Structure probing data (DMS and 2A3) for a 177-nucleotide construct.

RNA sequence: GGGAACGACUCGAGUAGAGUCGAAAAGAUAUGGACUACCGCAUUUGGUAGCGUUGAAAUCGGAAACGAUGGAGCUACCGGGAUGGAAGGUAGUCCUAAGUCAAAGGCGCUCCUUCGGGAGCGCCAACAAAGCUAUAUUGUUCGCAAUAUAGCUUUGAAAAGAAACAACAACAACAAC
Reactivity to DMS in 0.01 (KOAc 150mM, MgCl2 10mM, bicine 150mM(pH8.5), 24C), signal-to-noise 4, nucleotides 027 to 126: g010a030u000a300u010g000g000a020c000u000a000c000c000g010c020a030u000u000u010g010g010u010a000g000c000g000u010u010g000a080a140a020u000c000g000g010a140a100a180c010g010a010u000g000g000a100g000c000u000a000c000c000g000g000g010a020u000g000g010a100a100g010g010u000a000g000u000c000c000u000a020a080g000u010c030a070a120a110g000g050c010g070c010u000c000c000u000u030c180g030g020g010a020g020c000g020c010c010a010a050
Reactivity to 2A3 in 0.01 (KOAc 150mM, MgCl2 10mM, bicine 150mM(pH8.5), 24C), signal-to-noise 2, nucleotides 027 to 126: g020a010u070a050u170g010g000a000c010u010a000c010c010g180c060a010u010u010u070g000g000u010a000g000c000g070u250u040g050a030a000a020u020c000g000g030a050a070a010c000g000a010u020g000g030a010g010c000u000a000c000c000g000g050g000a030u030g010g130a190a150g000g000u010a000g000u000c000c000u000a010a000g000u020c020a050a070a090g020g010c000g030c010u000c030c050u090u140c300g020g010g000a010g010c060g010c000c010a000a010